[RMDB]
RNA sequence: GGGAACGACUCGAGUAGAGUCGAAAAGGUGGGUGUCCAGGGCCUGGCUCUGGGCUGCUACCCAGGGGCAGGGAUCUGGCCACAGUCCCGCAGGGCUGCCCCACAGCUGUUCAGGGUCACUGGUCUAACCUCCACGUGAAUUCGUUCACGUGGAGGUAAAAGAAACAACAACAACAAC
Reactivity to DMS in 0.01 (KOAc 150mM, MgCl2 10mM, bicine 150mM(pH8.5), 24C), signal-to-noise 1, nucleotides 027 to 126: g020g000u000g010g000g010u000g000u010c020c000a010g020g000g010c000c010u000g010g000c000u000c010u000g000g000g020c090u010g040c250u020a170c030c000c030a040g010g000g010g000c030a020g000g000g010a070u000c000u010g000g010c040c060a020c020a070g000u000c000c000c040g000c070a180g000g010g030c020u000g000c070c030c020c020a100c060a060g020c030u000g010u000u000c060a190g000g020g020u000c030a040c060u010g000g000u000c040u030a110